[RMDB]
RNA sequence: GGGAACGACUCGAGUAGAGUCGAAAAGCUCCCUCCCCGUCCUUCCCUUUUCUUAUUAUUCCGAGGAUGUUUCCCAGCCAGGGAUUUUCGUCCUCGAGUUUCUUGAUGGUUCUCCUGCUCUUCCGGAUUAGUAGUGCGUUCGCGCACUACAAAAGAAACAACAACAACAAC
Reactivity to DMS in 0.01 (KOAc 150mM, MgCl2 10mM, bicine 150mM(pH8.5), 24C), signal-to-noise 2, nucleotides 027 to 129: g030c070u030c000c000c000u010c020c030c000c050g020u050c030c050u000u000c000c000c000u030u060u000u040c120u000u000a120u120u010a150u040u030c160c010g020a070g020g010a020u040g000u040u020u030c030c000c040a160g000c190c270a200g060g020g000a080u010u010u020u000c040g040u010c010c000u010c010g030a100g010u000u010u000c030u010u020g020a010u070g050g020u030u020c060u030c050c010u020g040c050u040c040u010u040c000c000g000g000a140u070u020a110
Reactivity to 2A3 in 0.01 (KOAc 150mM, MgCl2 10mM, bicine 150mM(pH8.5), 24C), signal-to-noise 3, nucleotides 027 to 129: g000c000u040c030c000c000u000c010c010c000c020g040u030c000c000u000u000c020c000c000u000u070u060u050c110u150u090a290u130u050a120u120u010c060c030g000a030g020g000a040u000g020u000u000u000c000c000c010a050g110c080c040a060g000g000g010a000u050u050u000u080c000g000u020c000c000u000c010g000a010g010u020u030u000c040u030u090g050a090u090g170g000u010u000c020u000c000c000u070g040c000u070c000u000u000c020c020g040g000a030u050u050a070